[RMDB]
RNA sequence: GGGAACGACUCGAGUAGAGUCGAAAAUCAACGCGACAUGUGGUCGUCGGGGUCAGCAUCUGUGCCAGUACUGUGUACAUGUUAUUUGGAGAUUAAUUCAUGCAAGGUUUAUGCAUAUUCGGGUGCCCUUCACUGUCAUGUUCGCAUGACAGUGAAGAAAAGAAACAACAACAACAAC
Reactivity to 2A3 in 0.01 (KOAc 150mM, MgCl2 10mM, bicine 150mM(pH8.5), 24C), signal-to-noise 3, nucleotides 027 to 126: u080c010a000a060c050g020c020g020a030c010a040u250g070u100g180g020u050c010g000u010c050g010g000g030g000u070c050a030g000c000a040u020c020u040g030u040g050c000c000a030g040u060a050c050u080g030u020g010u170a030c010a060u060g080u070u050a140u060u120u110g080g020a080g000a040u090u140a050a110u120u060c040a010u050g020c010a020a080g050g000u120u180u090a100u070g020c000a000u020a120u110u050c000g020g000g000u050g010c060c010
Reactivity to DMS in 0.01 (KOAc 150mM, MgCl2 10mM, bicine 150mM(pH8.5), 24C), signal-to-noise 3, nucleotides 027 to 126: u000c080a100a150c120g020c070g010a060c070a110u000g010u010g010g010u000c040g030u000c030g030g000g010g020u000c060a090g020c070a060u000c050u000g010u000g010c030c050a080g020u000a050c090u000g000u010g020u000a060c040a080u010g000u010u000a070u010u000u000g010g000a150g010a080u010u010a070a090u000u010c080a060u010g000c040a060a110g030g000u010u010u000a080u010g030c020a030u000a120u010u000c050g000g000g010u010g020c040c060
Notes: The record gives the reactivity of an RNA of 177 nucleotides to 2A3 and DMS. Source: RMDB library OK2TST, as collected in RNAgym. For DMS the reverse transcriptase was MarathonRT. Conditions: 150 mM KOAc, 10 mM MgCl2 and 150 mM bicine (pH 8.5), 24 C.